RNA sequence: GGGAACGACUCGAGUAGAGUCGAAAAUCGGUAAUGGCGAAUGGGACCCAGAUCUCUCUCUAGCUUCCGAUAGAGAAGCGAGAGAAAGCUGGCUCUCCCUUAGCCAUCCGAGGUGACGCUCGUCCUCAAGGGGAGAUCUUCGGAUCUCCCAAAAGAAACAACAACAACAAC
Reactivity to 2A3 in 0.01 (KOAc 150mM, MgCl2 10mM, bicine 150mM(pH8.5), 24C), signal-to-noise 4, nucleotides 027 to 129: u020c000g010g030u100a060a040u000g000g000c000g040a030a030u030g000g000g000a000c010c000c010a020g010a090u040c030u000c000u000c000u000c020u080a030g010c000u000u000c010c010g160a200u100a140g090a010g000a010a000g000c010g000a020g000a000g000a020a000a000g010c010u000g000g000c020u000c000u000c020c000c000u000u010a000g000c000c000a000u000c000c000g000a000g000g060u110g020a000c020g020c020u020c030g070u040c010c010u100c050a080a080g090
Reactivity to DMS in 0.01 (KOAc 150mM, MgCl2 10mM, bicine 150mM(pH8.5), 24C), signal-to-noise 2, nucleotides 027 to 129: u010c020g030g000u050a090a010u000g040g010c030g050a150a100u010g040g000g000a000c190c010c010a010g010a050u030c000u000c060u040c000u020c010u050a240g060c000u020u020c040c000g000a170u040a100g050a070g030a000a030g030c020g040a020g000a010g070a010a050a030g000c010u000g000g040c030u030c090u000c010c020c050u010u010a220g000c030c000a030u080c000c000g020a000g030g060u070g030a070c220g000c110u040c000g050u030c080c010u080c080a150a180g130